[RMDB]
The record gives the reactivity of an RNA of 177 nucleotides to 2A3 and DMS. Source: RMDB library OK2TST, as collected in RNAgym. The 2A3 profile rests on 914 reads.
RNA sequence: GGGAACGACUCGAGUAGAGUCGAAAAGGAUUUGAAAUAGGGUUAGGAUUCGCUUCUGCUGAUAGGUAUGGAUCGGAAUAUAUUGAUCCUAUUAUUAUCGAAGACGGGAUAAUUUCCAUGGCAUCGAACAAUGCCCUUUGUUCGCAAAGGGCAUUGUAAAAGAAACAACAACAACAAC
Reactivity to 2A3 in 0.01 (KOAc 150mM, MgCl2 10mM, bicine 150mM(pH8.5), 24C), signal-to-noise 1, nucleotides 027 to 126: g120g000a080u060u090u140g080a050a040a060u100a030g000g020g020u040u020a020g050g030a050u070u000c030g010c060u010u000c000u040g000c040u020g020a160u040a070g030g040u090a080u290g010g080a000u020c020g000g050a130a060u210a020u040a100u130u100g000a000u000c000c000u000a000u000u010a000u000u020a010u010c000g000a030a000g020a020c020g010g010g000a010u000a100a120u150u010u000c040c000a020u060g080g010c040a110u030c150g050a000
Reactivity to DMS in 0.01 (KOAc 150mM, MgCl2 10mM, bicine 150mM(pH8.5), 24C), signal-to-noise 2, nucleotides 027 to 126: g020g000a090u000u000u010g000a050a080a080u010a050g000g010g000u010u000a050g020g000a080u010u000c050g040c070u000u000c010u000g010c070u010g000a060u000a040g020g010u000a030u010g030g010a030u010c010g000g030a080a080u010a170u010a110u010u010g000a010u010c000c000u010a020u020u010a060u000u000a060u010c020g000a090a050g020a100c090g000g000g020a050u000a080a070u010u000u000c030c010a100u000g020g010c100a040u000c100g010a070